[RMDB]
RNA sequence: GGGAACGACUCGAGUAGAGUCGAAAAGUAUCCAUGUUCGCAUGGAUACGAAAUAUGCGCGCGUAUAUCCGGUUGGCUGGAUGCGCGGGUCUGGCUGGCCGGUGGUGCUAGUCUUCGGACUAGCAAAGUUCACUGUAUUCUUCGGAAUACAGUGAACAAAAGAAACAACAACAACAAC
Reactivity to DMS in 0.01 (KOAc 150mM, MgCl2 10mM, bicine 150mM(pH8.5), 24C), signal-to-noise 3, nucleotides 027 to 126: g000u000a000u000c000c010a010u000g000u000u020c160g020c010a000u010g000g000a010u000a000c000g000a030a080a070u010a060u000g010c040g020c080g010c040g030u010a080u010a120u010c000c000g010g000u000u000g010g020c010u000g010g010a020u000g000c080g030c070g000g010g010u000c010u000g010g000c010u000g010g010c000c000g000g000u000g000g010u010g000c000u000a000g000u000c010u000u010c180g020g000a020c000u000a000g010c010a010a020a100
Reactivity to 2A3 in 0.01 (KOAc 150mM, MgCl2 10mM, bicine 150mM(pH8.5), 24C), signal-to-noise 2, nucleotides 027 to 126: g000u000a000u000c010c010a000u010g060u000u070c280g000c110a000u000g000g000a000u000a010c000g000a010a020a010u200a050u090g050c110g000c010g020c050g050u080a110u000a040u240c020c000g000g000u010u020g020g000c010u000g030g010a020u040g030c060g030c000g040g070g020u010c000u000g020g010c010u010g000g010c000c000g000g020u030g040g010u050g000c000u000a000g000u000c010u020u040c300g090g000a010c000u010a000g000c010a000a040a000
An RNA of 177 nucleotides, treated with DMS and 2A3 and read out base by base. DMS adducts were read by reverse transcription with MarathonRT. Conditions: 150 mM KOAc, 10 mM MgCl2 and 150 mM bicine (pH 8.5), 24 C. 2A3 adducts were read by reverse transcription with SuperScript II with manganese. Source: RMDB library M2PK50, as collected in RNAgym.